[RMDB]
RNA sequence: GGGAACGACUCGAGUAGAGUCGAAAAGCGCGCGAGGGUGGUGAGGAUUGUUUUUCGUCGUCGUCAAGGAGGGCGUAGGCGUAGUCGGGGUGCUUACCGUGGUUCUACUGAGGUACGCUCUGCGCGGCGAGGCUAAUAGAUUCGUCUAUUAGCCUCGAAAAGAAACAACAACAACAAC
Reactivity to DMS in 0.01 (KOAc 150mM, MgCl2 10mM, bicine 150mM(pH8.5), 24C), signal-to-noise 4, nucleotides 027 to 126: g010c040g010c050g030c060g010a080g010g000g030u000g000g000u000g010a080g000g000a070u000u010g010u000u000u000u000u000c040g010u000c040g020u000c030g000u010c090a090a140g020g010a070g010g000g010c020g030u000a050g010g010c030g000u000a040g000u010c020g010g010g000g030u000g010c120u000u000a050c070c060g010u000g010g000u000u000c060u010a060c030u000g000a070g000g000u000a040c030g000c000u000c020u000g000c030g010c050g000g020
Reactivity to 2A3 in 0.01 (KOAc 150mM, MgCl2 10mM, bicine 150mM(pH8.5), 24C), signal-to-noise 3, nucleotides 027 to 126: g000c030g000c010g000c020g050a020g000g010g040u060g010g030u030g020a030g040g000a060u040u090g100u060u050u010u020u070c030g010u000c010g010u000c010g000u020c040a030a050g090g010a030g000g080g000c000g000u010a040g020g020c000g020u000a010g040u020c000g000g020g000g010u040g030c030u030u060a050c000c020g100u050g020g030u050u030c020u020a100c010u010g020a010g010g060u030a020c010g000c000u000c020u050g030c050g000c020g020g000